[RMDB]
RNA sequence: GGGAACGACUCGAGUAGAGUCGAAAAGAUAUGGACUUGGCGAGCCUAGGAUCGGAAACGAUCCAAAAGGCGAUGAGCCAAGGUCCUAAGUCGCAGACUCGCUAUAAGUUCGCUUAUAGCGAGUCAACUACUUCGCGUACUUCGGUACGCGAAGUAGAAAAGAAACAACAACAACAAC
Reactivity to DMS in 0.01 (KOAc 150mM, MgCl2 10mM, bicine 150mM(pH8.5), 24C), signal-to-noise 1, nucleotides 027 to 126: g000a030u000a300u000g010g000a270c000u030u000g010g010c000g010a140g050c030c000u000a250g000g000a030u000c000g030g000a040a040a180c010g000a010u000c000c000a030a030a120a060g000g000c030g030a040u010g000a240g010c000c000a000a000g000g000u000c000c020u010a010a060g000u000c030g010c250a120g000a010c000u000c000g010c000u000a000u000a010a040g020u000u020c170g080c000u010u000a050u000a000g000c000g040a000g010u000c000a000a140